About this RNA
This 207-nucleotide RNA was probed chemically with 2A3 and DMS. The data come from the RNA Mapping Database (RMDB), library OK3TST.
[RMDB]
RNA sequence: GGGAACGACUCGAGUAGAGUCGAAAACGAAGAAGUCGACGUGUCCGAGUGGAUGCGGUACGACGCAGAAAAGCAAGCCGCUUACCAUGAAUGGCUGCAAUCCAUCACGUUUGGUGAAGCCACCAGGCCAGCCGGACGGAGCCAGGAAGCAGCGAAGCUGGAAAGUUGUAUUCGUACAACUUUCCAGAAAAGAAACAACAACAACAAC
Reactivity to 2A3 in 0.01 (KOAc 150mM, MgCl2 10mM, bicine 150mM(pH8.5), 24C), signal-to-noise 3, nucleotides 027 to 156: c060g040a020a120g030a170a000g000u000c000g010a050c020g010u010g010u000c020c020g070a120g110u300g070g010a010u020g010c010g030g000u100a060c030g040a000c020g020c010a020g120a060a070a010a000g000c030a000a110g060c040c060g020c050u060u070a130c080c030a100u180g090a120a050u080g170g000c010u010g000c010a020a070u040c010c000a030u040c030a050c090g000u010u000u010g090g000u080g030a040a010g010c010c010a110c040c040a020g020g000c020c000a010g000c010c000g000g020a010c000g010g020a020g080c020c000a020g000g000a020a020g040c000a000g000c020g020a040a030g040
Reactivity to DMS in 0.01 (KOAc 150mM, MgCl2 10mM, bicine 150mM(pH8.5), 24C), signal-to-noise 2, nucleotides 027 to 156: c030g000a110a200g040a050a050g020u000c000g000a060c030g020u000g000u000c030c040g040a300g000u000g060g000a050u010g010c020g000g050u000a050c030g020a040c050g020c150a190g000a100a090a060a150g010c060a110a180g020c000c000g050c000u000u000a100c020c020a140u000g000a110a090u000g030g020c000u010g050c010a120a110u000c040c000a210u000c020a050c040g030u000u010u000g020g020u000g020a150a200g030c020c020a080c180c180a240g010g040c020c010a300g010c020c000g000g000a030c080g000g000a100g030c030c040a230g010g000a210a270g000c020a010g020c000g020a010a150g020